[RMDB]
RNA sequence: GGGAACGACUCGAGUAGAGUCGAAAACUGGUGAAGGGAGGGAUGGCAGAGCCACCCGCUCUCCUGCGCUGUGGAAAGCAGCCAGCUCUGGGGCAGCUCUGCCACAUCACAGCCUCCCCAGAGCUCGGAAGUGAUGUAAGUUCGCUUACAUCACUUCAAAAGAAACAACAACAACAAC
Reactivity to DMS in 0.01 (KOAc 150mM, MgCl2 10mM, bicine 150mM(pH8.5), 24C), signal-to-noise 7, nucleotides 027 to 126: c020u010g010g020u000g010a300a130g000g010g010a060g010g000g010a080u000g000g000c000a040g010a030g010c000c040a180c010c010c010g000c050u000c030u010c120c000u000g010c230g010c010u000g000u000g000g010a110a110a160g010c020a030g010c010c040a030g010c080u000c050u010g000g010g000g010c120a120g000c000u000c020u000g010c030c020a010c070a040u010c140a070c270a190g000c050c020u000c010c020c000c010a030g000a300g000c040u000c190g020
Reactivity to 2A3 in 0.01 (KOAc 150mM, MgCl2 10mM, bicine 150mM(pH8.5), 24C), signal-to-noise 6, nucleotides 027 to 126: c020u040g030g010u080g070a070a030g020g010g020a020g020g070g030a150u030g010g000c020a000g000a010g030c010c020a050c010c020c020g090c020u040c010u050c010c010u080g020c090g010c060u010g020u070g090g230a220a110a060g010c000a000g000c010c010a010g010c020u100c120u170g020g000g000g010c040a010g000c000u000c000u010g010c000c010a010c010a010u050c010a020c020a040g120c000c000u020c000c010c000c000a030g010a010g030c030u050c090g090
The record gives the reactivity of an RNA of 177 nucleotides to DMS and 2A3.
Reactivities are given for positions 27 through 126.
For 2A3 the reverse transcriptase was SuperScript II with manganese.
DMS adducts were read by reverse transcription with MarathonRT.
The reactions ran in a buffer of 150 mM KOAc, 10 mM MgCl2 and 150 mM bicine (pH 8.5), at 24 C.
It was measured as part of the RMDB library OK2TST.